[RMDB]
RNA sequence: GGGAACGACUCGAGUAGAGUCGAAAAACGCAUGAUACGUCAUGCGACUGCGGCGCAGGCUUCAACCGGCGCCGUAGUUUUAACCUGAGCAGUAGCUCGCAAAGCUGCCGCUCUUAUUUUGAAGAAAUGAGACCAGCAGGGGCAUCCGGGCUGGUACCCGGACUAUCUGCGUGAUCCCUGGUGACUUGAUACAGUCGCUGCACACGACUAUUUCAGGAUUGCUCUGGUGUCUUCGCCGGUGGUGUCCCCUUACCGAGGGUGACCAAAGGGAAGUAUUCGUACUUCCCAAAAGAAACAACAACAACAAC
Reactivity to DMS in 0.01 (KOAc 150mM, MgCl2 10mM, bicine 150mM(pH8.5), 24C), signal-to-noise 2, nucleotides 027 to 266: a070c030g010c000a000u010g000a020u000a100c200g030u000c010a020u010g000c020g000a030c020u000g000c000g000g030c000g000c020a000g010g000c020u000u010c230a100a130c030c010g000g050c030g000c000c000g070u000a000g000u020u000u040u020a100a190c050c000u000g010a010g040c000a050g060u000a020g040c000u030c130g030c300a240a230a060g000c010u000g010c000c070g030c010u000c020u010u010a010u010u030u010u010g000a100a080g000a220a090a070u010g000a080g010a080c020c020a030g020c110a060g000g000g000g040c050a090u000c010c000g000g000g000c060u020g000g020u010a040c000c040c010g020g010a100c030u000a020u000c010u000g000c000g000u000g000a040u010c110c010c030u000g000g000u000g000a040c010u000u000g000a020u010a060c140a000g000u000c000g030c080u010g000c210a090c250a210c010g000a030c030u000a060u000u000u000c020a020g030g000a100u010u000g000c000u010c100u000g000g030u010g000u010c030u000u000c040g010c010c020g000g040u010g010g000u000g010u010c000c000c000c020u000u000a060c110c070g000a060g010g000g040u010g000a120c070c100a060a070a120
Reactivity to 2A3 in 0.01 (KOAc 150mM, MgCl2 10mM, bicine 150mM(pH8.5), 24C), signal-to-noise 1, nucleotides 027 to 266: a010c010g000c000a010u050g020a010u060a080c150g030u020c030a020u000g020c040g000a010c020u000g000c000g020g010c000g020c000a040g030g020c000u220u130c050a220a200c050c030g020g000c010g060c000c000g000u000a000g000u000u000u000u030a000a000c000c000u020g050a010g010c000a000g040u030a000g000c000u020c120g110c090a170a190a000g010c000u010g030c000c000g000c020u000c010u030u060a030u020u140u050u200g060a050a010g040a030a130a070u130g040a030g020a070c000c010a000g090c010a010g070g000g030g080c010a050u030c000c000g000g030g020c050u130g070g000u020a040c000c000c020g030g000a000c020u030a050u020c000u030g020c030g030u000g040a030u070c020c020c000u000g060g030u010g030a020c000u030u070g030a050u060a130c050a000g020u000c000g060c070u170g010c060a000c000a010c020g070a010c040u090a150u040u070u020c020a030g060g190a290u010u080g030c060u070c070u040g000g040u000g020u010c070u110u090c060g040c000c000g000g000u070g020g040u080g030u080c010c010c020c000u060u040a070c030c010g140a080g060g000g070u060g050a020c000c010a020a070a170